[RMDB]
RNA sequence: GGGAACGACUCGAGUAGAGUCGAAAAUCUUAGCGUUUCGACGCUAAGAAAACGUGGUGGAGGAGGUGGAAAGCUCGGCAUUAAACGGAUAAAAACAUCUUCAUAUAGGGUCGUUCGCGACCCUAAAAGUAAUGAAGGUCUUCGGACCUUCAUUACUAAAAGAAACAACAACAACAAC
Reactivity to DMS in 0.01 (KOAc 150mM, MgCl2 10mM, bicine 150mM(pH8.5), 24C), signal-to-noise 1, nucleotides 027 to 126: u000c000u020u000a000g000c010g020u000u000u010c190g030a070c000g050c000u000a010a030g000a030a080a040a100c060g000u010g030g020u010g000g000a050g000g000a070g010g030u010g000g000a080a040a050g000c020u000c050g000g010c040a050u000u000a020a060a050c080g020g000a180u020a030a050a100a090a140c140a060u030c030u000u000c080a140u000a180u000a030g000g020g030u000c000g030u000u010c150g040c000g010a010c000c000c000u000a000a030a020